[RMDB]
RNA sequence: GGGAACGACUCGAGUAGAGUCGAAAACUCGUGGAUUACGAUCCACGAGAAUAAAAUCAGCGGUAAGGAGGCGUAAAAUAUUACCGCUGAACGCCUCCUUAAACGCACUGGAUACGUCCAGUGCGAAGAUACGUAGUGGGUUCGCCCACUACGUAUCAAAAGAAACAACAACAACAAC
Reactivity to 2A3 in 0.01 (KOAc 150mM, MgCl2 10mM, bicine 150mM(pH8.5), 24C), signal-to-noise 7, nucleotides 027 to 126: c000u010c010g010u010g000g000a010u070u040a140c280g080a030u010c000c000a000c000g000a000g000a000a030u090a010a040a000a050u130c090a020g070c030g110g030u050a020a020g030g030a020g040g000c040g030u080a040a120a100a060u250a070u130u150a040c020c030g010c040u000g030a000a000c010g020c000c000u000c000c000u010u070a070a090a010c000g010c000a000c000u000g000g020a020u020a080c220g090u000c010c000a000g000u000g000c010g000a000a010
Reactivity to DMS in 0.01 (KOAc 150mM, MgCl2 10mM, bicine 150mM(pH8.5), 24C), signal-to-noise 3, nucleotides 027 to 126: c000u010c000g020u000g010g000a000u000u010a110c240g010a110u000c000c000a000c000g000a010g000a030a060u040a090a050a130a150u010c060a080g000c060g000g000u000a010a000g020g000a060g010g000c040g000u030a060a100a050a150u050a180u010u000a080c030c020g000c060u000g000a070a000c040g010c000c000u000c010c020u000u010a030a060a090c000g000c010a000c020u030g000g000a090u000a110c190g010u000c010c000a000g000u020g000c000g000a010a030

Background: Structure probing data (2A3 and DMS) for a 177-nucleotide construct. It was measured as part of the RMDB library OK1LIB. Values are in units of 0.01, from 0 to 300, in steps of 10.